[RMDB]
The data come from the RNA Mapping Database (RMDB), library 15KLIB.
Chemical mapping of a 170-nucleotide RNA with 2A3 and DMS.
For 2A3, 84,130 sequencing reads were counted.
For 2A3 the reverse transcriptase was SuperScript II with manganese.
For DMS, 161,634 sequencing reads were counted.
For DMS the reverse transcriptase was MarathonRT.
RNA sequence: GGGAACGACUCGAGUAGAGUCGAAAAAUGCCAUGCCGACCCGAAGAGGAAAGAAGAACUCGGACGCGAACCGUGAGUGGAACCCUGAUCCUUUAUUGGGGAGUACACUCGAGGAGUGGAAGGCGUUAUACACAAUACUUCGGUAUUGUGAAAAGAAACAACAACAACAAC
Reactivity to 2A3 in 0.01 (KOAc 150mM, MgCl2 10mM, bicine 150mM(pH8.5), 24C), signal-to-noise 9, nucleotides 027 to 129: a000u130g020c020c010a040u090g010c000c010g050a060c000c000c010g020a050a020g020a020g030g050a060a060a030g070a030a010g010a020a010c020u020c040g020g020a020c040g030c040g050a050a040c030c020g050u090g040a010g010u030g000g030a060a050c010c000c000u020g020a030u150c070c090u140u210u210a070u050u060g000g000g000g000a010g010u030a010c010a000c010u010c010g010a040g020g020a040g020u130g010g030a030a030g010g000c010g000u010u030a080u070a030
Reactivity to DMS in 0.01 (KOAc 150mM, MgCl2 10mM, bicine 150mM(pH8.5), 24C), signal-to-noise 9, nucleotides 027 to 129: a050u030g000c040c030a060u040g010c020c010g010a090c060c020c050g020a110a080g020a060g000g000a050a050a040g000a080a060g000a050a040c060u030c020g010g000a100c120g030c080g030a060a090c030c000g000u020g010a000g030u000g010g010a140a140c020c000c020u030g010a040u030c280c150u020u030u050a020u010u000g000g000g010g010a050g000u040a130c000a010c000u000c020g010a070g010g010a070g030u020g030g010a050a040g000g010c070g030u020u020a070u010a180